[RMDB]
Conditions: 150 mM KOAc, 10 mM MgCl2 and 150 mM bicine (pH 8.5), 24 C. Chemical mapping of a 177-nucleotide RNA with DMS and 2A3. Source: RMDB library VIROID, as collected in RNAgym. For DMS, 4,412 sequencing reads were counted.
RNA sequence: GGGAACGACUCGAGUAGAGUCGAAAAAUGAGUCCGUUCCAAGGAUGAAACCGUCUCUCCUAAUUCCCAGUUUCCAUAGGUUAAUUAUCCUCAUGGAUUACUUCUGGUAACCAGGAGUUUGUAGCGACAUGGUAAUUCUGUUCGCAGAAUUACCAUGAAAAGAAACAACAACAACAAC
Reactivity to DMS in 0.01 (KOAc 150mM, MgCl2 10mM, bicine 150mM(pH8.5), 24C), signal-to-noise 4, nucleotides 027 to 126: a090u010g000a090g000u000c060c040g020u000u000c040c010a110a090g000g010a060u000g000a110a110a110c070c040g000u000c050u000c010u000c010c010u010a050a130u000u000c090c000c010a170g010u000u000u000c000c000a020u010a010g020g010u000u010a100a110u000u010a070u000c020c010u010c180a060u000g010g010a030u010u000a020c050u000u000c020u000g010g000u010a080a070c110c050a020g010g010a020g010u000u000u000g010u000a070g010c110g010a210
Reactivity to 2A3 in 0.01 (KOAc 150mM, MgCl2 10mM, bicine 150mM(pH8.5), 24C), signal-to-noise 3, nucleotides 027 to 126: a010u150g010a010g030u030c090c060g010u020u040c010c000a030a050g090g030a070u150g060a080a060a030c030c000g050u000c020u000c020u000c030c000u070a090a060u040u020c000c000c010a000g010u010u060u000c010c000a000u010a020g000g070u040u060a160a060u210u170a140u140c000c010u080c060a020u050g010g000a000u010u070a040c010u030u020c010u020g050g000u070a050a060c060c000a030g000g020a020g000u020u170u080g050u030a040g050c030g050a040